[RMDB]
RNA sequence: GGGAACGACUCGAGUAGAGUCGAAAAACGAUGGGGAAUUCCAUCGAUGUUGAAAAAAAUAUUAGCAGCGUUGUGCCGACGCAAGGCGCGUUGGUUCGUGCCAAUUUUGAUACCCGCAUAGGCGUGCACAACGAUAGCGGUUCGCCGCUAUCGUUGUAAAAGAAACAACAACAACAAC
Reactivity to DMS in 0.01 (KOAc 150mM, MgCl2 10mM, bicine 150mM(pH8.5), 24C), signal-to-noise 1, nucleotides 027 to 126: a140c020g020a010u010g030g000g000g020a230a270u020u020c000c000a000u000c010g010a040u000g030u020u020g000a000a000a040a150a070a010a040u010a070u000u020a070g060c100a070g000c060g020u000u010g040u000g030c020c000g000a020c050g000c000a190a110g040g010c110g030c000g000u010u010g040g010u000u010c040g050u000g010c000c020a050a100u000u000u010u000g000a060u010a100c020c020c000g000c100a050u000a070g010g030c080g000u030g050c090